[RMDB]
RNA sequence: GGGAACGACUCGAGUAGAGUCGAAAAUUGUGGAAUACGUUCGCGUAUUCCACAAAACGUUAAACCAUCACUGUGUACUGGCCAAUAAACCCAGUAUCCCGUUCGACCGAGCCCGCUUAUCGGUAUCAGCGAAGGUAACAAUUCGUUGUUACCUUCGAUGGUGUUUUAUAUUCGUAUAAAACACCAUAAAAGAAACAACAACAACAAC
Reactivity to DMS in 0.01 (KOAc 150mM, MgCl2 10mM, bicine 150mM(pH8.5), 24C), signal-to-noise 5, nucleotides 027 to 156: u010u010g030u000g000g020a020a010u010a000c000g030u000u010c300g040c030g040u000a020u000u000c010c000a000c010a000a000a070a110c100g010u000u000a070a100a130c040c030a130u000c080a120c060u000g030u010g010u000a040c060u000g010g040c050c030a120a140u000a080a100a160c140c000c000a060g010u000a070u000c050c020c030g020u000u000c040g000a040c030c020g000a160g020c030c010c040g010c090u000u010a060u000c020g010g010u000a060u000c030a110g000c020g010a020a020g020g010u000a010a020c010a030a090u000u010c290g030u000u010g010u010u000a020c000c000u000u000c010g000
Reactivity to 2A3 in 0.01 (KOAc 150mM, MgCl2 10mM, bicine 150mM(pH8.5), 24C), signal-to-noise 7, nucleotides 027 to 156: u020u000g000u000g000g010a000a000u000a000c010g010u020u060c170g000c000g110u010a000u000u000c000c000a000c000a000a000a000a000c030g030u060u130a080a050a040c040c020a050u140c050a020c070u070g010u010g010u120a010c010u010g010g000c030c050a190a200u150a200a100a040c020c000c000a000g000u010a020u030c010c020c010g050u090u090c050g050a030c010c000g010a010g060c030c040c060g050c120u110u110a060u080c020g020g050u040a090u140c060a010g060c000g000a000a000g000g000u000a000a000c000a010a020u060u100c190g050u100u010g000u000u000a000c000c000u000u000c000g000